[RMDB]
This 177-nucleotide RNA was probed chemically with DMS. It was measured as part of the RMDB library OK2TST. The DMS profile rests on 694 reads. The reactions ran in a buffer of 150 mM KOAc, 10 mM MgCl2 and 150 mM bicine (pH 8.5), at 24 C.
RNA sequence: GGGAACGACUCGAGUAGAGUCGAAAAGAACAGUUCCGCCGAACGCACCGGCAACGGCUUGCCGAGGAGGAUGUCGGCAUCCGCAAAAGCGACCGCGUCGUGGUUGAGGAACGGUUGGUGGAAGGAAGUAGUACCCACGUUUCGACGUGGGUACUACAAAAGAAACAACAACAACAAC
Reactivity to DMS in 0.01 (KOAc 150mM, MgCl2 10mM, bicine 150mM(pH8.5), 24C), signal-to-noise 1, nucleotides 027 to 126: g000a040a030c070a120g000u000u000c000c020g030c050c010g020a030a030c050g010c170a150c100c020g030g020c050a170a050c050g020g010c120u000u010g000c010c010g000a060g000g010a230g000g030a150u030g000u000c020g020g010c030a010u000c030c040g000c200a050a030a150a220g000c020g000a070c040c100g000c200g000u020c030g030u000g020g010u030u000g010a300g040g010a040a100c000g000g010u000u020g020g030u010g020g000a040a010g030g020a170a050